[RMDB]
RNA sequence: GGGAACGACUCGAGUAGAGUCGAAAAAUCCUCAGGUUCAUAAGCGUGAUGAUUGGGUGUUCAUGCUCUAUGCAUGACAUGUGCCUCCUUUGAACCUUGUUACGACCUUGGCACAUUACCCAUCUGAAAAAGACGUUCGCGUUCGCGCGAACGUCAACUUUGAUGUACCCUUCGGGGUACAUCAAAGAAAAGAAACAACAACAACAAC
Reactivity to 2A3 in 0.01 (KOAc 150mM, MgCl2 10mM, bicine 150mM(pH8.5), 24C), signal-to-noise 3, nucleotides 027 to 156: a010u020c010c010u070c010a010g020g010u000u000c010a010u060a240a040g050c110g160u120g120a120u060g070a020u230u300g020g000g000u090g040u090u030c010a010u010g020c020u040c070u170a100u300g000c000a000u000g000a000c020a000u020g000u010g000c000c000u020c010c000u000u010u010g000a010a010c000c000u010u070g080u050u090a100c110g060a140c030c050u080u100g000g000c000a000c000a010u050u170a020c000c020c010a010u020c030u110g110a100a090a030a030a030g010a000c000g000u000u000c000g000c010g060u010u050c240g010c000g010c000g100a010a010c010g010u000c010a000a000
Reactivity to DMS in 0.01 (KOAc 150mM, MgCl2 10mM, bicine 150mM(pH8.5), 24C), signal-to-noise 1, nucleotides 027 to 156: a120u010c010c010u010c060a020g000g030u010u010c010a010u010a010a110g020c190g030u020g000a200u010g020a060u010u010g070g020g040u010g040u000u000c000a010u000g000c030u000c140u000a100u000g030c000a000u000g010a010c300a110u020g010u000g010c000c000u000c100c030u010u000u000g000a030a020c030c040u000u000g020u010u010a120c220g010a080c150c060u000u000g020g000c030a010c020a090u010u000a080c020c000c010a060u020c030u000g000a050a060a150a170a070g010a020c000g040u000u000c000g060c000g010u010u000c300g060c020g030c000g020a000a000c000g050u000c000a000a030
Chemical mapping of a 207-nucleotide RNA with 2A3 and DMS. DMS adducts were read by reverse transcription with MarathonRT. The reactions ran in a buffer of 150 mM KOAc, 10 mM MgCl2 and 150 mM bicine (pH 8.5), at 24 C. It was measured as part of the RMDB library M2RFOK.